[RMDB]
RNA sequence: GGGAACGACUCGAGUAGAGUCGAAAACAUUCAAGGUCUUCUCCAAACAAGAGGUUAGUGAGGUCCUGGAUACUGAGAGGCUCCACAAGUAUUGGUAUGCAUUGAUUCGGUCAGCCUUGGGACAGCAAAUAUCCGGAUCAGCUGCCAAAGCUAUUGAACGGGAUUACAAAUUCGUUUGUAAUCCCGUAAAAGAAACAACAACAACAAC
Reactivity to 2A3 in 0.01 (KOAc 150mM, MgCl2 10mM, bicine 150mM(pH8.5), 24C), signal-to-noise 5, nucleotides 027 to 156: c030a060u090u080c020a010a000g000g010u000c000u010u000c010u000c030c040a070a140a100c080a110a120g070a080g180g090u160u150a060g060u090g170a010g000g000u020c000c010u000g000g000a020u040a060c060u040g010a010g010a020g070g000c020u020c020c010a020c020a080a030g030u030a070u040u060g000g010u030a050u290g040c040a100u030u120g020a000u010u000c000g010g000u040c080a010g010c010c000u030u020g040g000g000a010c010a010g000c000a070a060a130u150a070u070c010c000g000g000a000u000c000a000g000c000u000g000c010c000a020a010a000g020c020u170a090u300u190g040a040
Reactivity to DMS in 0.01 (KOAc 150mM, MgCl2 10mM, bicine 150mM(pH8.5), 24C), signal-to-noise 1, nucleotides 027 to 156: c070a180u000u000c020a080a010g020g010u010c050u000u000c020u050c050c030a050a130a140c080a110a180g020a140g030g000u000u000a050g000u000g020a070g030g050u000c010c030u010g010g020a030u010a030c110u000g000a150g010a020g000g010c110u010c000c010a050c000a030a080g070u000a140u010u000g010g010u000a070u000g060c030a090u000u010g000a080u030u010c030g070g000u000c210a140g010c000c010u000u050g000g060g000a210c260a070g000c020a060a060a200u000a100u000c010c010g020g000a010u000c000a160g000c000u000g040c000c010a030a040a260g020c030u010a150u000u000g030a200